[RMDB]
RNA sequence: GGGAACGACUCGAGUAGAGUCGAAAACGAGGUCCCUAGAAAAACCCCUAGGCAGGCGCCAUCGCGCCCGUACCGCAAACCGACACAGGUGGGUGGGUAGAACAUACCGAGGCGAUCGGGUCAACCAGAGAUAUAGUCUGUUCGCAGACUAUAUCUCAAAAGAAACAACAACAACAAC
Reactivity to 2A3 in 0.01 (KOAc 150mM, MgCl2 10mM, bicine 150mM(pH8.5), 24C), signal-to-noise 8, nucleotides 027 to 126: c040g020a040g030g040u060c020c000c000u020a040g150a030a080a020a020a030c020c000c010c010u030a020g010g030c040a030g060g000c030g010c030c030a120u080c050g000c000g030c000c010c010g020u030a050c010c010g030c060a040a040a040c010c020g120a090c100a030c030a180g060g010u050g020g010g030u080g000g020g000u040a080g050a090a020c060a080u110a070c020c030g020a020g050g030c040g020a020u050c010g030g030g010u030c020a030a050c030c010a030
Reactivity to DMS in 0.01 (KOAc 150mM, MgCl2 10mM, bicine 150mM(pH8.5), 24C), signal-to-noise 7, nucleotides 027 to 126: c080g010a120g020g010u010c030c000c020u000a120g000a050a040a040a090a090c050c020c010c020u010a060g000g010c180a090g010g010c050g010c040c090a040u030c070g000c050g000c010c010c010g020u010a060c020c010g000c070a040a070a040c030c020g010a120c160a110c150a160g000g010u000g000g000g020u020g010g010g000u000a030g000a090a080c130a070u020a050c060c020g000a120g000g010c070g000a100u010c010g000g010g020u010c060a090a100c100c090a100
The record gives the reactivity of an RNA of 177 nucleotides to 2A3 and DMS. Values cover nucleotides 27 to 126. The reactions ran in a buffer of 150 mM KOAc, 10 mM MgCl2 and 150 mM bicine (pH 8.5), at 24 C. For DMS the reverse transcriptase was MarathonRT. For 2A3 the reverse transcriptase was SuperScript II with manganese.